[RMDB]
RNA sequence: GGGAACGACUCGAGUAGAGUCGAAAACCCUUAGCAUUCGUGCUAAGGGAAAUAACGGUCGGCUCAUGCAGCUAGUCGAAAAUGCUGCUCGACCUUAUGGUAAAAUCUGGCCGUUCGCGGCCAGAAACCAAGAGAUAAUGUUCGCAUUAUCUCUUGGAAAAGAAACAACAACAACAAC
Reactivity to 2A3 in 0.01 (KOAc 150mM, MgCl2 10mM, bicine 150mM(pH8.5), 24C), signal-to-noise 9, nucleotides 027 to 126: c000c000c000u000u000a000g000c000a030u030u050c200g070u050g000c000u000a000a000g000g000g020a060a170a000u070a030a010c110g000g000u010c000g010g020c050u070c270a040u230g000c000a000g000c000u050a020g270u200c080g070a050a040a010a060u170g000c000u000g010c020u030c010g000a000c000c000u000u030a100u050g070g020u100a050a060a010a190u020c000u000g000g010c020c000g010u020u040c280g010c000g080g000c000c000a000g000a010a000a000
Reactivity to DMS in 0.01 (KOAc 150mM, MgCl2 10mM, bicine 150mM(pH8.5), 24C), signal-to-noise 8, nucleotides 027 to 126: c000c000c000u000u000a000g010c000a030u000u010c190g030u000g010c000u000a010a010g010g000g010a010a040a010u000a020a040c190g020g000u000c000g010g010c150u010c160a060u010g000c000a010g010c000u000a190g010u010c220g000a070a110a090a080u010g000c010u000g010c000u000c000g000a010c000c000u000u000a010u000g010g000u010a070a070a090a100u000c010u000g000g000c000c000g020u000u010c200g020c010g010g010c000c010a000g000a010a050a110

This 177-nucleotide RNA was probed chemically with 2A3 and DMS. Conditions: 150 mM KOAc, 10 mM MgCl2 and 150 mM bicine (pH 8.5), 24 C. Source: RMDB library M2PK50, as collected in RNAgym.